[RMDB]
RNA sequence: GGGAACGACUCGAGUAGAGUCGAAAAGCUGUGUCAUAUGUGUGUCAAUAGGUGGCAGGGAGGAGAGUGACUAUGUCUAUGCUCAGUGUUCUGACCCAUGAACAUCAGAGUGAUUAGCAGCCUAACAGAACUUACAGAGGUUCGCCUCUGUAAGUUCAAAAGAAACAACAACAACAAC
Reactivity to DMS in 0.01 (KOAc 150mM, MgCl2 10mM, bicine 150mM(pH8.5), 24C), signal-to-noise 2, nucleotides 027 to 126: g020c020u040g010u010g010u020c020a040u000a080u000g010u010g030u000g000u010c080a100a060u020a100g000g020u020g010g000c030a060g000g000g000a020g000g010a050g010a080g020u000g020a060c090u020a080u010g000u020c020u000a090u010g000c030u010c010a110g020u000g000u000u000c020u000g000a140c100c040c050a100u000g010a070a010c010a000u000c040a090g000a080g010u000g020a060u010u020a090g000c050a080g020c030c050u000a060a120c190a090
Reactivity to 2A3 in 0.01 (KOAc 150mM, MgCl2 10mM, bicine 150mM(pH8.5), 24C), signal-to-noise 1, nucleotides 027 to 126: g010c030u030g040u010g100u070c020a020u050a120u140g110u000g020u030g030u030c020a090a090u100a160g020g050u040g040g010c000a020g060g050g000a010g030g020a040g000a000g030u030g020a000c020u040a100u220g040u000c000u020a080u130g010c000u000c020a040g010u040g020u110u000c020u040g180a210c000c000c000a020u030g010a010a000c000a020u090c060a040g030a020g040u040g000a060u070u010a010g000c000a010g050c010c000u030a060a010c040a120
This 177-nucleotide RNA was probed chemically with DMS and 2A3. Conditions: 150 mM KOAc, 10 mM MgCl2 and 150 mM bicine (pH 8.5), 24 C. Source: RMDB library RFMREP, as collected in RNAgym. For 2A3 the reverse transcriptase was SuperScript II with manganese.